RNA sequence: GGGAACGACUCGAGUAGAGUCGAAAAGUGGCGUCCAGCCGGGUGGUGGGGGACAGCGCAGCCUCACCUGCAGGAGCAUCACCAGGCUCGACGGUCAGCGCUCAGCCAGCCAGCUCGACGCAAGUUGACGGGGUGAGUGUUUCGACACUCACCCCGUAAAAGAAACAACAACAACAAC
Reactivity to DMS in 0.01 (KOAc 150mM, MgCl2 10mM, bicine 150mM(pH8.5), 24C), signal-to-noise 1, nucleotides 027 to 126: g010u000g020g000c020g030u000c010c080a120g070c070c060g040g000g010u000g000g050u000g000g090g000g020g000a100c280a070g080c020g060c080a260g060c070c000u000c020a130c080c010u000g000c070a050g000g000a070g060c110a020u000c150a020c300c080a060g000g000c050u000c110g010a060c150g000g000u020c170a030g010c060g000c000u010c080a220g000c040c010a100g000c020c000a070g000c000u000c240g040a020c000g000c040a030a000g000u000u000g000
Structure probing data (DMS) for a 177-nucleotide construct. The data come from the RNA Mapping Database (RMDB), library OK2TRN. For DMS, 551 sequencing reads were counted. Reactivities are given for positions 27 through 126.